[RMDB]
RNA sequence: GGGAACGACUCGAGUAGAGUCGAAAAGAAGAGCAGUCAGAUAAUCUUGUGCAGAAUGAAUGCUCGUAACUGCAUCGCACAAGUAGAUGUAGAUAACUUUAAUCUCUCAUAGCGGAGGAGCCGCAGACCCUGGAUAGGACUUCGGUCCUAUCCAGGGAAAAGAAACAACAACAACAAC
Reactivity to 2A3 in 0.01 (KOAc 150mM, MgCl2 10mM, bicine 150mM(pH8.5), 24C), signal-to-noise 3, nucleotides 027 to 126: g120a010a010g000a000g000c000a000g030u140c020a010g060a180u080a130a110u100c060u060u160g050u100g140c010a010g040a180a020u030g000a030a030u000g010c000u000c020g030u030a030a010c020u000g000c000a020u000c000g000c040a020c010a230a060g030u070a030g030a020u000g040u000a000g030a080u120a020a020c000u010u010u150a120a160u040c030u020c020u000c050a120u100a060g090c030g020g030a130g090g030a060g160c020c000g000c010a040g060a140
Reactivity to DMS in 0.01 (KOAc 150mM, MgCl2 10mM, bicine 150mM(pH8.5), 24C), signal-to-noise 1, nucleotides 027 to 126: g000a100a000g000a000g000c020a000g020u000c020a090g070a260u030a100a160u020c040u000u020g000u000g000c000a130g000a080a150u030g000a020a070u000g030c030u000c000g000u000a080a040c000u000g010c020a020u000c020g000c040a000c030a080a000g000u020a180g000a060u000g060u030a000g000a020u020a000a040c060u000u000u000a050a150u010c140u000c010u000c040a060u000a130g000c030g000g000a290g000g060a300g000c000c000g060c080a070g000a100